[RMDB]
The record gives the reactivity of an RNA of 177 nucleotides to 2A3 and DMS.
The DMS profile rests on 4,001 reads.
Conditions: 150 mM KOAc, 10 mM MgCl2 and 150 mM bicine (pH 8.5), 24 C.
For 2A3 the reverse transcriptase was SuperScript II with manganese.

RNA sequence: GGGAACGACUCGAGUAGAGUCGAAAAGAUAUGGACUCCCGACAUGCUAAACGGUCGGAAACGACCGCACUAGCAACAGCGUGGAGUCCUAAGUCAAAACUUAUAAAGACUUCGGUCUUUAUAAGAAUCUUACCAAUAAGUUCGCUUAUUGGUAAGAAAAAGAAACAACAACAACAAC
Reactivity to 2A3 in 0.01 (KOAc 150mM, MgCl2 10mM, bicine 150mM(pH8.5), 24C), signal-to-noise 3, nucleotides 027 to 126: g000a010u060a030u090g010g000a010c010u000c000c020c000g040a110c060a140u300g000c000u010a040a060a030c000g020g000u000c000g030g040a070a030a020c010g000a000c000c020g010c020a020c060u020a000g000c070a130a110c090a090g070c010g200u300g010g000a000g010u000c000c000u000a030a000g000u000c010a000a000a140a170c000u010u000a000u010a020a020a000g010a010c010u030u140c300g060g000u000c000u020u000u000a010u000a000a010g010a000a040
Reactivity to DMS in 0.01 (KOAc 150mM, MgCl2 10mM, bicine 150mM(pH8.5), 24C), signal-to-noise 4, nucleotides 027 to 126: g010a040u010a290u010g000g000a020c000u000c000c010c000g020a070c090a170u000g000c000u000a010a140a250c010g000g000u000c000g010g000a040a070a150c000g010a010c010c010g000c050a040c200u000a000g010c020a060a090c180a120g030c000g000u010g020g000a010g010u000c000c000u000a000a060g000u010c020a110a100a120a200c000u000u000a000u000a000a000a020g000a010c000u000u010c210g030g010u000c000u000u000u000a000u000a000a010g000a110a100